[RMDB]
RNA sequence: GGGAACGACUCGAGUAGAGUCGAAAACCCCCAAGUUUCGACUUGGGGGAAUUAAAAUCAGGGGUAAAUAAUUAGCUCGCGUUACCGCUGAACGCGAGCAUAGAGCAAUGCGCUUCGGCGCAUUGAAGCUAUACUGCGUAUUCGUACGCAGUAUAGCAAAAGAAACAACAACAACAAC
Reactivity to 2A3 in 0.01 (KOAc 150mM, MgCl2 10mM, bicine 150mM(pH8.5), 24C), signal-to-noise 4, nucleotides 027 to 126: c000c010c000c000c010a010a000g000u020u060u150c150g100a020c000u000u000g000g020g010g000g060a010a020u140u090a070a040a030a090u110c070a050g030g010g020g060u080a010a090a110u140a090a200u200u230a060g000c000u000c000g000c000g000u000u030a110c020c030g050c140u090g020a000a000c000g000c000g000a000g020c000a010u030a010g010a010g020c010a010a000u010g000c010g010c000u030u040c220g070g000c000g000c000a000u000u000g000a000a000
Reactivity to DMS in 0.01 (KOAc 150mM, MgCl2 10mM, bicine 150mM(pH8.5), 24C), signal-to-noise 3, nucleotides 027 to 126: c000c010c000c010c000a010a010g010u000u000u010c130g020a040c000u000u010g010g000g020g010g000a000a000u010u000a060a060a100a100u000c090a090g010g000g010g020u000a060a110a110u010a070a090u010u000a080g010c000u000c010g000c000g000u000u010a060c040c110g010c070u010g000a020a010c000g020c010g000a000g000c010a000u000a030g010a120g010c010a010a010u000g000c000g010c000u000u010c190g030g010c000g000c010a000u000u000g000a080a110
This 177-nucleotide RNA was probed chemically with 2A3 and DMS. For 2A3 the reverse transcriptase was SuperScript II with manganese. The DMS profile rests on 4,044 reads. The data come from the RNA Mapping Database (RMDB), library M2PK50. The 2A3 profile rests on 5,471 reads. For DMS the reverse transcriptase was MarathonRT.